[RMDB]
RNA sequence: GGGAACGACUCGAGUAGAGUCGAAAACUAAGUUUUCGAACUUAGAUUUCCUAAGUCAACGGGAGACCAUACAAGGGAGCUCUGUCGGAAACGACAGAGCGACGAUCUUGUAUGGUCUUUGAUCGUUGAUAUGGAGUGUGAAGGAUUUCGAUCCUUCCAAACCGGACCUUUUCGAAGGUCCGGUUUGAAAAGAAACAACAACAACAAC
Reactivity to DMS in 0.01 (KOAc 150mM, MgCl2 10mM, bicine 150mM(pH8.5), 24C), signal-to-noise 1, nucleotides 027 to 156: c000u000a040a040g000u000u010u000u020c290g050a010a010c010u000u010a010g020a230u060u000u000c010c010u000a090a230g020u000c010a030a000c010g040g000g040a060g010a020c010c000a010u010a000c020a000a040g000g000g020a120g000c020u000c000u010g000u000c020g060g020a190a140a300c080g010a030c020a000g000a020g050c010g000a020c210g000a030u000c000u000u000g000u000a000u010g000g000u000c000u000u000u000g000a110u010c000g020u040u020g010a040u000a230u000g020g020a190g030u000g010u020g020a050a120g010g000a200u000u010u010c110g010a300u000c000c000u000u000c000